An RNA of 207 nucleotides, treated with DMS and 2A3 and read out base by base. Reactivities are given for positions 27 through 156. The RNA was probed in 150 mM KOAc, 10 mM MgCl2 and 150 mM bicine (pH 8.5) at 24 C. For 2A3 the reverse transcriptase was SuperScript II with manganese. The DMS profile rests on 2,868 reads.

RNA sequence: GGGAACGACUCGAGUAGAGUCGAAAACAAGUUCUUCUUUCAACUUGGGUCAGCAGUCCAUGCCCAACAGACCCAACUACAUUGGCUUCAGAGACAACUUUAUCGGGCUCAUGUACUACAACAGCACUGGCAAUAUGGGUGUACUGGCCGGUCAGGCAAGGUUGUAUGAGUUCGCUCAUACAACCUUAAAAGAAACAACAACAACAAC
Reactivity to DMS in 0.01 (KOAc 150mM, MgCl2 10mM, bicine 150mM(pH8.5), 24C), signal-to-noise 2, nucleotides 027 to 156: c050a110a220g030u010u000c040u000u000c040u000u010u020c030a090a050c070u000u000g010g030g030u010c040a140g030c070a090g000u010c000c030a140u000g020c000c020c020a070a090c090a170g010a110c000c010c020a080a090c050u020a080c070a190u000u010g020g010c060u000u010c050a150g010a140g020a090c000a090a070c070u000u000u000a080u030c050g020g000g030c020u010c120a070u000g000u010a070c050u000a120c040a060a050c030a140g020c040a170c020u000g010g030c030a060a080u010a160u000g000g010g030u010g010u000a060c020u020g010g010c030c010g060g000u000c060a120g010g000c060
Reactivity to 2A3 in 0.01 (KOAc 150mM, MgCl2 10mM, bicine 150mM(pH8.5), 24C), signal-to-noise 3, nucleotides 027 to 156: c060a040a040g020u050u000c030u070u020c000u050u130u100c100a060a050c020u040u040g000g000g020u030c020a020g020c040a000g080u030c060c030a070u080g030c000c020c020a030a040c030a030g040a010c030c060c010a030a010c030u090a010c000a060u000u060g030g000c010u080u070c110a090g030a040g020a070c060a140a100c130u090u170u150a140u130c040g050g010g000c020u020c010a000u010g020u010a100c020u060a010c060a090a010c000a040g030c030a020c090u030g010g020c000a030a050u090a090u170g040g020g000u050g020u090a040c000u020g020g050c010c020g030g040u060c030a040g040g070c070